[RMDB]
RNA sequence: GGGAACGACUCGAGUAGAGUCGAAAAACGCGCACGCGCCGGUGUUCCUCGACAAUCCGGCGCUCGUUUCGGUGCCGCUCGCGUUCGCGGGCAUCGUGAUCGGCUCGCUCACCGAUCGCAGCGAGCAACUAUACUGAGUGUUCGCACUCAGUAUAGUAAAAGAAACAACAACAACAAC
Reactivity to 2A3 in 0.01 (KOAc 150mM, MgCl2 10mM, bicine 150mM(pH8.5), 24C), signal-to-noise 7, nucleotides 027 to 126: a000c040g020c010g000c010a030c070g010c000g000c000c000g010g030u030g030u060u080c050c100u060c080g060a060c060a070a080u050c010c010g010g050c030g000c000u020c010g010u010u060u050c010g010g020u010g010c010c020g040c060u070c040g060c030g100u250u150c140g000c020g010g030g000c020a030u030c020g020u030g030a090u090c040g050g000c030u030c050g020c010u040c010a070c010c060g050a050u090c060g010c040a010g000c010g010a020g010c010a010
Reactivity to DMS in 0.01 (KOAc 150mM, MgCl2 10mM, bicine 150mM(pH8.5), 24C), signal-to-noise 9, nucleotides 027 to 126: a060c090g020c240g010c180a070c160g010c010g020c010c010g010g010u000g010u000u000c060c070u010c130g010a120c120a110a110u010c000c000g000g010c010g020c010u000c050g010u000u010u000c020g020g010u000g000c020c060g000c050u000c040g020c030g000u010u010c130g010c030g010g010g030c020a010u000c030g020u000g000a060u000c050g000g010c040u000c100g000c060u000c060a240c040c050g000a040u000c050g010c090a090g000c020g000a040g010c040a100
Source: RMDB library OK2TRN, as collected in RNAgym. This 177-nucleotide RNA was probed chemically with 2A3 and DMS. The RNA was probed in 150 mM KOAc, 10 mM MgCl2 and 150 mM bicine (pH 8.5) at 24 C. Values cover nucleotides 27 to 126.